[RMDB]
RNA sequence: GGGAACGACUCGAGUAGAGUCGAAAAGCUACGCAUUAUUUCACGAGUUUACUAUUAUGAUGCACGUGAUUUUCAUAUUAGGCAUAGUACUUAACAGUUUCCUACAUUGUAUCUUACUGCCAUGUAGGUACAUACAUGGAUUUAAAUAAAUGAGUAAAGUCAUGACUAGUUUCGACUAGUCAUGACUAAAAGAAACAACAACAACAAC
Reactivity to DMS in 0.01 (KOAc 150mM, MgCl2 10mM, bicine 150mM(pH8.5), 24C), signal-to-noise 2, nucleotides 027 to 156: g010c010u000a020c010g030c010a140u030u010a040u000u000u000c040a110c040g020a210g040u000u000u000a110c070u010a170u000u010a150u000g030a070u000g010c040a140c030g050u000g000a080u000u000u000u000c030a100u030a130u000u000a040g030g000c010a070u000a060g020u000a080c110u000u000a030a090c120a160g030u000u000u000c010c010u000a100c130a050u000u000g010u000a090u000c070u000u000a010c020u000g030c000c030a010u000g030u000a020g010g040u000a080c160a110u000a010c020a030u000g000g000a080u000u000u010a070a070a070u010a050a000a130u010g010a170g020u010a090a120
Reactivity to 2A3 in 0.01 (KOAc 150mM, MgCl2 10mM, bicine 150mM(pH8.5), 24C), signal-to-noise 3, nucleotides 027 to 156: g040c020u020a010c040g000c020a080u080u070a050u020u210u040c030a000c030g020a010g030u020u130u120a110c070u040a110u300u120a240u300g080a050u080g000c040a030c030g000u000g050a050u060u040u050u090c040a040u040a080u200u130a070g030g020c000a010u020a050g070u050a050c070u070u070a160a010c030a140g000u010u040u050c010c000u010a040c000a030u000u040g020u060a070u070c110u050u080a070c080u020g070c000c010a000u010g000u000a010g020g060u020a010c020a020u080a010c040a070u040g010g000a020u090u110u150a070a130a070u160a040a030a120u140g070a000g070u080a100a250